[RMDB]
RNA sequence: GGGAACGACUCGAGUAGAGUCGAAAAGAGCCGGAGGAGGAGAGGCAAGAGAUCCCGAGGGGGCUUCAGGCUAAAGAGUGGACGAUUUUCGGGGAAGGUCUCCCAAGAAGAACCAGGAACACCUCAAUCAGGCGUCAGUUCGCUGACGCCAAAAGAAACAACAACAACAAC
Reactivity to DMS in 0.01 (KOAc 150mM, MgCl2 10mM, bicine 150mM(pH8.5), 24C), signal-to-noise 3, nucleotides 027 to 129: g050a180g020c020c100g000g070a090g110g000a010g000g010a090g110a030g050g060c200a040a070g000a090g060a050u000c010c080c120g000a150g100g080g030g000g000c100u070u040c150a010g000g030c070u050a100a070a070g140a160g010u030g060g000a040c130g000a060u050u080u080u090c030g110g040g000g000a050a000g040g000u000c050u000c010c000c050a120a100g090a050a030g020a060a030c080c040a080g060g000a030a020c090a120c010c020u030c090a110a030u100c070a100
Reactivity to 2A3 in 0.01 (KOAc 150mM, MgCl2 10mM, bicine 150mM(pH8.5), 24C), signal-to-noise 2, nucleotides 027 to 129: g040a000g070c010c010g000g030a030g020g000a030g000g000a010g000a010g010g000c010a030a000g080a010g010a010u020c050c000c000g000a010g030g000g010g000g000c000u070u050c060a010g010g010c000u080a020a070a000g160a030g010u070g010g020a010c040g000a000u020u020u090u100c060g000g000g000g020a010a060g060g010u000c030u000c040c000c010a020a020g010a000a020g010a010a000c040c040a000g000g030a020a010c070a040c010c010u050c060a030a140u190c110a040